[RMDB]
RNA sequence: GGGAACGACUCGAGUAGAGUCGAAAAGCGAUGCGUACACCAAAAAAACUUGUCUUUGGACGGGUAACGGCUUUGUAAUGCCGGAUACAAACGCAGUAUUGCCAACAGGGAACAACAAUCCAGGCUGGCAAAAGCUAGGCGGUAAGUCUAAGCGAACGUAGAGUCGAAAUUUCGAUUUCGACUCUACAAAAGAAACAACAACAACAAC
Reactivity to DMS in 0.01 (KOAc 150mM, MgCl2 10mM, bicine 150mM(pH8.5), 24C), signal-to-noise 1, nucleotides 027 to 156: g040c000g030a120u010g060c040g040u010a090c020a130c030c090a030a000a010a160a010a070a200c080u000u000g020u000c060u020u000u020g040g000a080c030g000g060g020u030a080a100c000g020g020c000u000u000u000g000u000a090a070u020g030c000c030g000g010a150u010a060c060a060a060a080c240g050c000a180g010u000a090u000u000g000c000c020a040a000c040a020g000g000g010a040a010c040a180a060c300a040a020u000c010c000a040g000g010c030u000g000g000c070a020a020a060a130g010c030u010a060g030g030c000g040g000u000a060a110g010u020c010u010a030a050g010c000g020a000a130c240
Reactivity to 2A3 in 0.01 (KOAc 150mM, MgCl2 10mM, bicine 150mM(pH8.5), 24C), signal-to-noise 3, nucleotides 027 to 156: g100c070g080a060u050g020c010g050u070a040c020a100c020c090a000a020a020a040a040a050a070c050u070u030g030u030c040u050u170u200g070g010a020c050g020g040g020u010a090a020c010g010g040c000u010u160u280g180u280a100a060u260g000c000c000g000g000a010u050a090c060a010a100a010c050g000c010a000g030u070a100u020u050g000c010c010a040a000c020a030g000g020g010a030a080c070a070a050c000a230a050u010c000c010a020g000g010c020u000g000g000c000a060a040a000a000g000c000u010a010g020g000c000g000g150u150a090a030g000u000c010u020a070a080g000c000g040a040a020c100